Chemical mapping of a 177-nucleotide RNA with DMS and 2A3. The data come from the RNA Mapping Database (RMDB), library OK1LIB. High 2A3 reactivity points to a flexible backbone, as in loops and unpaired stretches.
RNA sequence: GGGAACGACUCGAGUAGAGUCGAAAACUCCAGCUGAAUCGAAGCGAGUAUCGAUUCAGAGAUAUGACAUGAUGCUAACGCUUACCACAACUCAAUGUUGUGAUAGCUGGGACAUUGAGUACUGUACGAUGUACUGUUAUUUCGAUGAUAGUACAUCAAAAGAAACAACAACAACAAC
Reactivity to DMS in 0.01 (KOAc 150mM, MgCl2 10mM, bicine 150mM(pH8.5), 24C), signal-to-noise 9, nucleotides 027 to 126: c090u010c010c030a160g000c010u000g000a010a010u000c020g010a030a080g010c170g010a160g020u020a060u000c000g000a010u000u000c010a010g000a060g000a110u030a050u020g000a140c130a020u020g000a040u000g010c030u000a020a130c190g010c010u000u010a100c100c020a020c020a010a010c000u010c250a110a090u040g010u000u000g010u000g000a030u010a000g010c020u000g010g010g010a140c020a030u000u010g000a110g000u010a040c050u010g010u020a110c200
Reactivity to 2A3 in 0.01 (KOAc 150mM, MgCl2 10mM, bicine 150mM(pH8.5), 24C), signal-to-noise 9, nucleotides 027 to 126: c020u000c000c000a020g010c010u010g020a010a010u020c020g020a030a000g120c050g070a040g070u060a060u030c000g010a000u010u000c000a000g010a000g010a040u050a040u130g060a020c020a020u130g010a020u030g030c020u040a060a010c040g000c000u010u030a050c010c000a010c010a030a010c010u060c060a100a110u220g000u010u010g020u010g020a020u030a010g000c010u030g010g020g020a010c000a010u020u040g050a010g030u050a070c030u040g030u070a040c120